[RMDB]
RNA sequence: GGGAACGACUCGAGUAGAGUCGAAAAGAAUGUUUUCUACGUGACUAGCAACGCACAAAAGUUUCUGUGCGACAAAUAUGAAAUUUUGUCACAGGACUUUUGAGCGUUGCUAGUUGAAAGAAGAUAAAACUGUGUUAUCGUUCGCGAUAACACAGUUAAAAGAAACAACAACAACAAC
Reactivity to DMS in 0.01 (KOAc 150mM, MgCl2 10mM, bicine 150mM(pH8.5), 24C), signal-to-noise 2, nucleotides 027 to 126: g010a170a070u020g000u000u000u000u010c010u000a110c260g040u020g000a000c000u000a000g000c000a000a000c000g000c000a150c000a000a000a000a000g000u020u000u060c010u000g000u000g020c150g010a020c000a020a010a010u000a120u030g000a110a130a080u030u000u020u000g010u010c000a050c010a000g000g000a000c000u000u000u000u000g000a030g010c000g010u000u000g000c010u000a010g000u000u000g010a080a050a060g000a020a030g000a020u010a050a080
Reactivity to 2A3 in 0.01 (KOAc 150mM, MgCl2 10mM, bicine 150mM(pH8.5), 24C), signal-to-noise 2, nucleotides 027 to 126: g120a050a100u140g040u000u060u000u000c030u020a090c100g160u120g040a000c000u000a000g030c000a000a000c010g020c000a000c010a030a000a030a000g000u030u070u150c030u020g010u050g050c100g110a000c030a000a010a020u190a080u210g200a020a160a120u020u040u000u010g020u020c000a000c000a000g000g000a000c010u000u010u000u000g000a000g000c010g000u000u000g000c000u000a010g000u000u000g000a000a010a000g030a020a000g000a000u100a150a080